This 177-nucleotide RNA was probed chemically with 2A3 and DMS. The reactions ran in a buffer of 150 mM KOAc, 10 mM MgCl2 and 150 mM bicine (pH 8.5), at 24 C. The 2A3 profile rests on 1,836 reads. Reactivities are rounded to 0.1 and cut off at 0 and 3. DMS adducts were read by reverse transcription with MarathonRT. High 2A3 reactivity points to a flexible backbone, as in loops and unpaired stretches.
[RMDB]
RNA sequence: GGGAACGACUCGAGUAGAGUCGAAAACGUCGCCGAUGUGAUCGGGCUCAACAAAGCAACGGUCUAUCACUACUACGCCAGCAAGUCGCUGAUCCUGUUCGACAUUUACCGUCAGGCGGCCGAGGGCAACGCGGAACAAGUUCGCUUGUUCCGCGUUAAAAGAAACAACAACAACAAC
Reactivity to 2A3 in 0.01 (KOAc 150mM, MgCl2 10mM, bicine 150mM(pH8.5), 24C), signal-to-noise 3, nucleotides 027 to 126: c030g010u000c020g000c050c000g070a090u040g060u070g100a030u000c030g000g000g040c040u050c080a060a270c070a100a130a010g050c010a120a190c040g000g000u000c000u040a020u060c010a010c050u100a050c030u030a050c080g010c030c000a030g000c020a060a110g020u070c030g020c070u030g050a140u130c010c020u040g040u070u050c050g020a030c070a090u100u120u140a060c050c030g020u040c030a020g000g020c000g010g000c010c030g050a120g020g000g000c010
Reactivity to DMS in 0.01 (KOAc 150mM, MgCl2 10mM, bicine 150mM(pH8.5), 24C), signal-to-noise 2, nucleotides 027 to 126: c130g000u010c120g050c100c110g030a010u020g080u000g000a040u030c040g020g050g000c000u000c050a120a210c300a050a120a040g010c010a000a140c090g000g060u000c000u030a120u020c010a170c110u000a130c060u020a090c200g000c020c010a000g020c070a180a030g000u000c000g040c060u010g000a120u010c010c010u010g000u000u020c060g000a000c120a030u030u030u010a060c160c100g000u000c050a100g000g000c030g020g070c020c020g100a140g000g010g000c090